[RMDB]
RNA sequence: GGGAACGACUCGAGUAGAGUCGAAAAGAUAUGGACAUCGAUAAGAUACUGAGCUGAUGACCAUUUGUAGCUUCGGAAACGAAGCUACAAAUGCAAGGCUCAUUAUCUUUUGACGAUGUCCUAAGUCGUCCUUAAUGAACUUCGGUUCAUUAAGGACAAAAGAAACAACAACAACAAC
Reactivity to DMS in 0.01 (KOAc 150mM, MgCl2 10mM, bicine 150mM(pH8.5), 24C), signal-to-noise 2, nucleotides 027 to 126: g000a120u010a300u000g000g010a030c000a000u000c000g050a210u000a020a000g030a040u000a010c130u000g010a010g010c000u000g000a140u030g010a200c300c000a020u000u000u000g000u010a000g030c000u000u020c030g000g000a070a090a240c000g010a010a000g000c000u000a000c000a000a000a000u020g000c050a040a090g020g020c000u000c000a020u000u000a000u000c000u010u000u000u000g010a220c050g020a020u000g030u000c000c000u010a030a090g000u010c100
Reactivity to 2A3 in 0.01 (KOAc 150mM, MgCl2 10mM, bicine 150mM(pH8.5), 24C), signal-to-noise 2, nucleotides 027 to 126: g060a020u150a090u250g020g020a000c000a000u000c010g050a060u020a120a020g000a010u020a000c010u000g000a000g000c000u020g040a300u100g030a240c070c000a020u000u000u010g000u000a000g020c010u000u000c020g010g050a030a080a080c020g000a010a020g050c020u000a000c000a000a000a000u000g000c020a040a140g020g000c010u000c000a000u000u000a000u000c000u010u120u010u110g170a090c000g010a000u000g010u000c000c000u020a020a010g070u010c090